This 177-nucleotide RNA was probed chemically with DMS.
The reactions ran in a buffer of 150 mM KOAc, 10 mM MgCl2 and 150 mM bicine (pH 8.5), at 24 C.
The DMS profile rests on 993 reads.
DMS adducts were read by reverse transcription with MarathonRT.
[RMDB]
RNA sequence: GGGAACGACUCGAGUAGAGUCGAAAAAAGGAGCUGGCCCGCGCGCUAGACGACGACGCCCGCUUCGCCGAGCUGCAGCUGGACGCGCUUCCGGCCUCGCCGGCCAAGGCAGUACAGGAGCUGGCCGCAGGACCAUCGGAUUCGUCCGAUGGUCCUGAAAAGAAACAACAACAACAAC
Reactivity to DMS in 0.01 (KOAc 150mM, MgCl2 10mM, bicine 150mM(pH8.5), 24C), signal-to-noise 1, nucleotides 027 to 126: a030a160g050g000a080g010c010u000g000g030c010c050c050g020c080g000c110g000c060u000a130g020a090c020g010a060c060g000a140c220g000c000c010c050g000c010u000u000c060g000c050c010g020a090g000c020u000g020c050a100g010c010u000g010g000a060c030g010c140g020c170u000u000c040c090g040g050c020c030u010c160g010c110c120g000g000c130c080a060a070g000g000c000a160g000u010a040c110a140g000g000a100g000c090u000g010g000c020c070g030